The record gives the reactivity of an RNA of 177 nucleotides to DMS and 2A3. The 2A3 profile rests on 1,356 reads. DMS adducts were read by reverse transcription with MarathonRT. Conditions: 150 mM KOAc, 10 mM MgCl2 and 150 mM bicine (pH 8.5), 24 C.

[RMDB]
RNA sequence: GGGAACGACUCGAGUAGAGUCGAAAAUUUUUAUGGCUCGACAUGAUUAUUUUGGUAAGAUGAUAUGUGAAGCCUACAAUAUUGAAUUUAGAACUGACGUGCCACUCACUGAGAUCUUACUUGAUAAACUGCAUAUGCAUUUCGAUGCAUAUGCAGUAAAAGAAACAACAACAACAAC
Reactivity to DMS in 0.01 (KOAc 150mM, MgCl2 10mM, bicine 150mM(pH8.5), 24C), signal-to-noise 3, nucleotides 027 to 126: u000u000u010u010u000a060u000g000g010c110u000c140g000a120c010a010u000g000a050u000u000a030u010u000u000u010g010g000u000a030a050g010a030u000g010a110u010a080u000g000u000g010a020a140g000c040c040u000a090c150a030a090u000a080u010u010g020a170a120u000u000u020a120g020a130a120c190u010g010a120c140g000u010g020c020c040a140c140u000c020a020c040u000g000a190g020a010u000c030u000u000a020c020u010u000g010a140u010a070a070
Reactivity to 2A3 in 0.01 (KOAc 150mM, MgCl2 10mM, bicine 150mM(pH8.5), 24C), signal-to-noise 2, nucleotides 027 to 126: u050u060u000u020u020a050u050g000g000c010u020c090g080a020c020a020u030g050a040u060u020a020u040u160u040u100g030g000u020a020a010g000a000u030g040a110u050a020u150g010u000g020a060a040g010c000c000u000a010c020a050a050u100a060u190u260g040a140a080u100u190u140a120g010a060a030c030u030g010a020c110g050u070g020c000c000a060c020u010c000a010c000u020g000a020g000a080u010c000u000u020a040c030u000u020g040a080u130a110a100